[RMDB]
RNA sequence: GGGAACGACUCGAGUAGAGUCGAAAAAUUCUGUCAGCCUACAGAUUCUGGUACCUGGAUUUUUACCCUUGGUGAUUUCUACCACCUUACUACUGAAGAAGACACCAUUCCAGUGGACCACUGUGACACCACGAUGGGUCUUCGGACCCAUCGUGGUAAAAGAAACAACAACAACAAC
Reactivity to 2A3 in 0.01 (KOAc 150mM, MgCl2 10mM, bicine 150mM(pH8.5), 24C), signal-to-noise 1, nucleotides 027 to 126: a000u160u050c020u030g120u030c000a020g020c000c050u140a010c000a000g250a100u090u010c000u090g040g000u110a110c000c040u000g000g000a050u000u000u000u080u220a050c020c020c000u060u120g000g000u020g020a080u120u000u000c000u040a190c000c070a050c000c010u020u060a130c060u080a030c000u070g070a120a050g000a110a020g060a140c000a000c000c000a020u040u060c000c000a000g100u170g040g040a020c000c000a050c020u060g040u030g070a000c000
The data come from the RNA Mapping Database (RMDB), library RFM100. This 177-nucleotide RNA was probed chemically with 2A3. The RNA was probed in 150 mM KOAc, 10 mM MgCl2 and 150 mM bicine (pH 8.5) at 24 C. Values cover nucleotides 27 to 126.